This 177-nucleotide RNA was probed chemically with 2A3 and DMS. The reactions ran in a buffer of 150 mM KOAc, 10 mM MgCl2 and 150 mM bicine (pH 8.5), at 24 C. For DMS the reverse transcriptase was MarathonRT.
[RMDB]
RNA sequence: GGGAACGACUCGAGUAGAGUCGAAAACGCAUUUGUAAUAUGUCCUGCAGUGCUGUGAUGUGACAAUAUCAUUGUUACAAAGCAGUCGGUAUUGUAUGCAUUCCAUAUCAUUAUCAGAAUAUUAGGCCAGGUAGGCACUAUUCGUAGUGCCUACCUGAAAAGAAACAACAACAACAAC
Reactivity to 2A3 in 0.01 (KOAc 150mM, MgCl2 10mM, bicine 150mM(pH8.5), 24C), signal-to-noise 2, nucleotides 027 to 126: c030g010c030a080u000u090u160g100u010a090a040u040a090u180g090u080c000c050u040g000c040a030g040u030g100c010u010g060u030g040a070u030g020u000g000a010c000a010a000u060a100u120c150a050u040u010g000u020u010a030c030a030a010a000g020c000a000g030u010c030g000g020u040a040u020u090g040u060a050u060g020c050a020u130u000c030c000a020u030a010u100c070a030u050u110a060u160c020a030g120a220a060u150a120u220u160a090g080g090c060
Reactivity to DMS in 0.01 (KOAc 150mM, MgCl2 10mM, bicine 150mM(pH8.5), 24C), signal-to-noise 2, nucleotides 027 to 126: c180g010c100a070u000u010u010g020u020a080a040u000a070u000g010u000c060c060u000g000c180a050g000u010g010c020u010g000u000g000a300u000g010u000g010a020c010a000a030u010a150u020c160a080u000u000g030u000u000a010c050a000a100a300g020c010a020g020u000c030g010g000u000a010u010u000g020u000a020u010g010c060a100u000u000c060c010a040u010a050u010c030a040u000u000a030u010c040a130g010a040a100u010a100u000u000a080g010g010c140